[RMDB]
RNA sequence: GGGAACGACUCGAGUAGAGUCGAAAAACUUCGCCCACACCGCAAGGUCUACAACGGUGUGACCGACGAAUGGGAUCUCUGUCGAGAUUUGGAACCACCAGCCGAGUUGGCAGGCGCAUCCGCAAUGAGUCAGACGAUGUUUCGACAUCGUCUGACUAAAAGAAACAACAACAACAAC
Reactivity to DMS in 0.01 (KOAc 150mM, MgCl2 10mM, bicine 150mM(pH8.5), 24C), signal-to-noise 1, nucleotides 027 to 126: a050c030u000u000c000g030c030c030c000a020c030a020c030c070g060c070a150a060g000g000u000c100u070a040c020a070a240c170g000g020u000g000u000g040a060c180c050g010a010c070g000a020a040u010g000g030g000a050u060c000u000c000u010g000u000c060g000a150g010a080u000u000u000g000g000a050a100c140c000a040c110c030a070g000c000c090g000a020g060u010u000g060g000c020a060g000g040c100g000c160a100u000c000c040g100c180a000a050u000g010
Reactivity to 2A3 in 0.01 (KOAc 150mM, MgCl2 10mM, bicine 150mM(pH8.5), 24C), signal-to-noise 2, nucleotides 027 to 126: a000c000u000u000c160g060c000c010c000a000c000a000c000c000g020c010a090a050g050g040u090c040u090a060c010a300a060c030g010g000u000g010u010g000a010c000c000g180a240c000g010a180a060u050g070g000g000a030u010c030u030c070u080g110u100c140g010a010g020a120u060u080u130g100g000a000a000c090c020a040c000c010a010g000c000c040g000a030g050u010u220g010g060c010a000g000g000c000g010c040a020u000c000c000g090c070a030a100u120g030

Background:
Structure probing data (DMS and 2A3) for a 177-nucleotide construct. In probing experiments dimethyl sulfate is read out at A N1 and C N3, which are open when not base-paired. The reactions ran in a buffer of 150 mM KOAc, 10 mM MgCl2 and 150 mM bicine (pH 8.5), at 24 C. For DMS, 1,111 sequencing reads were counted.